[RMDB]
RNA sequence: GGGAACGACUCGAGUAGAGUCGAAAAGAUAUGGACCCACGAGCAACAGCCCACCGUCGGAAACGACGGUUGGGACAUGCUCGUGUGGGUCCUAAGUCAAAGGGAUCGAACUUCGGUUCGAUCCCAACAUCGAGUAGUACUUCGGUACUACUCGAUGAAAAGAAACAACAACAACAAC
Reactivity to 2A3 in 0.01 (KOAc 150mM, MgCl2 10mM, bicine 150mM(pH8.5), 24C), signal-to-noise 2, nucleotides 027 to 126: g000a000u010a020u040g000g000a010c000c000c010a000c000g000a000g020c160a030a260c140a300g000c010c010c000a000c010c000g000u020c000g020g000a020a010a010c010g000a000c000g000g000u030u140g010g000g000a000c010a050u120g000c010u000c000g030u060g030u040g060g000g000u040c010c000u010a020a000g010u020c040a060a120a130g000g000g000a000u030c030g010a010a000c020u090u170c300g080g000u000u000c020g000a010u000c000c000c000a000a000